This 177-nucleotide RNA was probed chemically with DMS and 2A3. Values cover nucleotides 27 to 126.
[RMDB]
RNA sequence: GGGAACGACUCGAGUAGAGUCGAAAAUUGCAGUUGAUUGAAACUAAAUCAUGUGCGCUAAGUUGUCCCGAAAGUAUCUUUGGAUUUCUACAAAACAGUGUUCCUUCUUUAGGAUGCUGAUCCGUAGCAGUGUUCCGUAUUUCGAUACGGAACACUGAAAAGAAACAACAACAACAAC
Reactivity to DMS in 0.01 (KOAc 150mM, MgCl2 10mM, bicine 150mM(pH8.5), 24C), signal-to-noise 5, nucleotides 027 to 126: u010u040g010c030a070g010u000u000g000a040u000u010g000a140a150a200c220u020a060a050a020u000c020a020u000g010u010g020c020g010c200u020a060a050g000u010u020g000u010c000c010c000g000a130a110a100g000u020a030u000c020u010u000u010g000g000a040u030u020u020c010u010a020c040a080a070a100a220c050a020g030u000g000u000u010c010c030u000u020c290u000u010u000a050g000g000a050u000g000c020u000g000a160u010c090c100g010u010a010g010
Reactivity to 2A3 in 0.01 (KOAc 150mM, MgCl2 10mM, bicine 150mM(pH8.5), 24C), signal-to-noise 3, nucleotides 027 to 126: u110u070g000c000a030g100u030u020g000a050u000u050g070a060a040a150c170u070a150a070a030u010c000a000u070g100u040g150c000g000c130u080a090a050g170u130u100g030u060c000c000c000g010a000a030a010g070u080a070u090c090u050u050u030g040g030a030u040u090u100c000u010a070c030a000a050a150a010c010a030g000u020g200u090u060c030c000u050u090c060u100u170u060a000g000g000a000u010g010c000u000g000a020u010c030c030g020u000a000g030